[RMDB]
RNA sequence: GGGAACGACUCGAGUAGAGUCGAAAAUCGUUCCCACCUAAUUUCGCAAUUUAUUGUCCUUGACUUCUACCACGAGAAAAAAAUUAAGAAAAUGCAACGCUGCCCGUGCAGGGUUUUCUGAGCGGGAGGUUAAUGAUGCAUUCGUGCAUCAUUAACCAAAAGAAACAACAACAACAAC
Reactivity to 2A3 in 0.01 (KOAc 150mM, MgCl2 10mM, bicine 150mM(pH8.5), 24C), signal-to-noise 6, nucleotides 027 to 126: u020c000g000u000u010c040c000c000a030c010c010u120a120a140u020u070u090c040g040c060a040a060u040u070u090a160u150u150g020u030c020c000u030u100g030a050c010u060u010c020u080a060c010c020a090c110g040a020g090a070a040a020a010a000a040a070u230u210a110a030g070a040a090a020a010u100g040c020a050a030c070g010c040u050g020c000c010c010g000u010g050c020a020g010g000g060u060u010u070u060c020u010g020a010g010c000g030g010g010a040
Reactivity to DMS in 0.01 (KOAc 150mM, MgCl2 10mM, bicine 150mM(pH8.5), 24C), signal-to-noise 2, nucleotides 027 to 126: u030c000g000u000u000c010c010c010a180c200c120u020a080a020u020u000u000c010g050c080a090a020u000u020u060a150u000u000g010u020c050c000u000u040g000a030c010u030u020c030u000a070c050c020a050c080g030a120g030a020a000a050a080a100a000a110u060u020a080a110g000a030a060a030a030u010g000c180a060a040c120g010c100u020g000c000c030c060g000u070g000c000a120g000g030g010u050u010u020u020c010u000g010a130g000c050g010g070g040a140

This 177-nucleotide RNA was probed chemically with 2A3 and DMS. The DMS profile rests on 1,862 reads. The RNA was probed in 150 mM KOAc, 10 mM MgCl2 and 150 mM bicine (pH 8.5) at 24 C.